Record summary:
Chemical mapping of a 177-nucleotide RNA with 2A3 and DMS. For DMS the reverse transcriptase was MarathonRT. For 2A3, 7,175 sequencing reads were counted. The DMS profile rests on 3,148 reads. The reactions ran in a buffer of 150 mM KOAc, 10 mM MgCl2 and 150 mM bicine (pH 8.5), at 24 C.
RNA sequence: GGGAACGACUCGAGUAGAGUCGAAAAGAUAUGGAAUCCCGUAGGGAGAAGAGUGUCGGAAACGACAUAACUUCAUCGAUCUACCGGGAUUCCUAAGUCAAAAUCGAUGACCUUCGGGUCAUCGAAAGAAAGUACUGAUGUUCGCAUCAGUACUUUCAAAAGAAACAACAACAACAAC
Reactivity to 2A3 in 0.01 (KOAc 150mM, MgCl2 10mM, bicine 150mM(pH8.5), 24C), signal-to-noise 3, nucleotides 027 to 126: g000a000u050a020u110g000g000a010a000u000c010c010c010g010u000a010g030g110g090a250g010a030a000g050a000g000u000g000u000c010g000g020a020a050a030c000g020a000c020a040u180a160a130c030u010u000c010a100u300c100g130a170u000c000u000a050c120c230g000g030g000a000u000u000c010c000u000a020a000g000u000c020a020a020a000a300u030c010g010a000u000g000a000c000c000u040u080c300g120g000g000u000c010a000u000c000g010a000a000a020
Reactivity to DMS in 0.01 (KOAc 150mM, MgCl2 10mM, bicine 150mM(pH8.5), 24C), signal-to-noise 4, nucleotides 027 to 126: g000a060u000a300u000g000g000a030a020u000c010c000c030g050u000a010g010g010g010a100g040a020a000g020a300g020u000g010u000c010g000g010a090a070a170c000g000a010c000a020u000a120a110c010u000u000c000a250u000c230g010a100u010c000u000a010c110c100g040g000g000a030u000u000c000c000u000a030a100g020u010c030a060a080a140a130u000c010g000a010u000g000a010c000c000u000u020c220g020g010g020u000c010a000u010c000g000a010a020a130